[RMDB]
RNA sequence: GGGAACGACUCGAGUAGAGUCGAAAAUGGAUAAGGAACGCCGCUUCCAGCAGGGCCAGAUAGCCAGCGGUGGUGCGAGCCGGGAUCGACAGGUCGUUCGCCAGUGCGCUCACGUUGAGCUCGGCGCGUGAGAGGCAUCCUUCGGGAUGCCUCUCACAAAAGAAACAACAACAACAAC
Reactivity to 2A3 in 0.01 (KOAc 150mM, MgCl2 10mM, bicine 150mM(pH8.5), 24C), signal-to-noise 1, nucleotides 027 to 126: u130g000g060a090u150a040a140g190g010a260a010c000g050c060c000g000c010u070u000c050c020a030g150c040a070g000g000g100c010c000a000g190a280u170a000g000c010c000a150g000c000g000g080u040g020g000u070g110c130g000a070g000c000c000g000g000g050a020u030c030g000a020c150a010g010g020u050c000g020u030u000c000g250c000c030a010g020u070g140c080g000c000u100c000a090c220g000u100u180g020a010g010c000u020c030g000g070c000g000c050